[RMDB]
RNA sequence: GGGAACGACUCGAGUAGAGUCGAAAAGAUAUGGAAUGCCAUCAGGCGAAGAACUCUAUCGGAAACGAUAGAGGGAGCCUAAUGGACAUUCCUAAGUCAAAGCUAAAGCACUUCGGUGCUUUAGCAAGUUUCAGUCUCACUUCGGUGAGACUGAAACAAAAGAAACAACAACAACAAC
Reactivity to DMS in 0.01 (KOAc 150mM, MgCl2 10mM, bicine 150mM(pH8.5), 24C), signal-to-noise 1, nucleotides 027 to 126: g000a030u010a300u010g010g000a000a000u020g000c030c000a000u000c090a060g040g000c000g000a080a180g000a110a300c000u000c030u000a000u000c000g000g000a170a160a270c000g000a000u000a000g000a070g000g000g000a110g000c000c000u020a000a030u000g000g010a110c000a040u010u000c010c000u030a000a240g050u000c080a140a140a100g000c000u000a000a000a020g030c000a000c000u000u020c300g030g000u000g000c000u000u000u000a000g050c010a020a010